[RMDB]
RNA sequence: GGGAACGACUCGAGUAGAGUCGAAAAAGGGUGCCGGCGUGCGGAGCUAUGGCACCAGGGCUGUCCGGUGGGGGCACGCCACCUGUGACAGCUGCGUCCGAGCAACUGGUCCCUGGUGCGAAGGUGGUCUAGCGACCGCGUUCGCGCGGUUGCUAGGAAAAGAAACAACAACAACAAC
Reactivity to DMS in 0.01 (KOAc 150mM, MgCl2 10mM, bicine 150mM(pH8.5), 24C), signal-to-noise 9, nucleotides 027 to 126: a070g010g000g010u010g000c030c030g000g000c060g020u010g010c080g000g000a140g010c040u000a100u040g010g000c010a020c010c000a050g000g000g010c030u000g000u000c000c020g010g000u010g000g000g010g010g010c060a040c100g000c000c000a000c000c000u020g030u040g010a020c010a010g010c020u010g010c090g010u010c030c030g000a140g010c110a090a090c100u010g000g010u010c010c000c000u010g000g010u000g010c010g010a080a100g010g010u010g000g000
Reactivity to 2A3 in 0.01 (KOAc 150mM, MgCl2 10mM, bicine 150mM(pH8.5), 24C), signal-to-noise 8, nucleotides 027 to 126: a000g110g010g000u030g020c020c010g020g020c030g030u100g030c030g050g020a040g010c020u050a070u130g060g000c000a000c000c000a000g000g010g000c000u000g000u000c000c010g000g000u010g010g010g000g020g120c040a010c020g030c000c000a000c000c010u090g060u130g010a000c000a000g000c000u020g030c010g030u000c010c010g000a030g020c020a050a090c030u070g010g020u030c000c000c000u010g020g000u010g000c020g020a030a000g040g020u050g010g030
This 177-nucleotide RNA was probed chemically with DMS and 2A3. It was measured as part of the RMDB library OK1LIB. The DMS profile rests on 72,911 reads. The reactions ran in a buffer of 150 mM KOAc, 10 mM MgCl2 and 150 mM bicine (pH 8.5), at 24 C. For DMS the reverse transcriptase was MarathonRT. Values are in units of 0.01, from 0 to 300, in steps of 10.